This 207-nucleotide RNA was probed chemically with 2A3 and DMS. For 2A3, 1,481 sequencing reads were counted. Reactivities are given for positions 27 through 156. The DMS profile rests on 7,804 reads.
[RMDB]
RNA sequence: GGGAACGACUCGAGUAGAGUCGAAAAGUAAGCAAAAAGGCAGCAAAGACAGUUUUUCAGCUUGGGGACAUAGAGUAGAAAUGGUCUGUCCCCAAAUAGUGGGAACUGUCAUUUGGGGGAAGAAUAGCAAGUUCUUUGCUUUCCAGGUCGCAUUUGAUGGUAUGGUAAAUUUCGAUUUACCAUACCAAAAAGAAACAACAACAACAAC
Reactivity to 2A3 in 0.01 (KOAc 150mM, MgCl2 10mM, bicine 150mM(pH8.5), 24C), signal-to-noise 2, nucleotides 027 to 156: g020u040a020a010g030c030a040a000a000a030a040g030g010c020a020g010c030a060a040a030g000a000c010a000g000u000u000u020u130u260c030a070g060c030u030u020g000g000g000g000a010c020a040u250a060g030a030g060u160a040g140a110a120a110u120g060g010u030c000u020g000u000c000c000c000c000a000a020a000u030a000g070u020g000g000g020a000a000c010u000g000u000c000a000u020u030u050g010g010g010g030g000a000a040g010a090a020u070a040g020c050a040a030g050u040u090c030u020u080u030g020c000u050u030u000c020c010a010g010g070u040c040g020c050a080u080u030u070g070a060
Reactivity to DMS in 0.01 (KOAc 150mM, MgCl2 10mM, bicine 150mM(pH8.5), 24C), signal-to-noise 2, nucleotides 027 to 156: g010u000a070a080g030c040a030a040a060a130a080g020g010c050a120g060c040a060a100a130g010a040c000a040g000u000u000u000u000u000c010a080g010c020u000u010g000g020g020g010a030c010a060u010a060g010a150g020u010a110g000a100a100a160u000g020g020u010c040u000g010u000c000c000c000c000a000a000a020u000a060g020u000g010g000g010a010a020c020u000g000u000c000a060u000u000u010g010g000g000g030g020a080a080g000a050a060u000a050g020c070a050a070g000u010u000c070u000u000u000g020c010u000u000u000c040c050a100g020g010u000c020g040c060a120u000u000u000g000a300
Notes
Reactivities are rounded to 0.1 and cut off at 0 and 3. DMS adducts were read by reverse transcription with MarathonRT.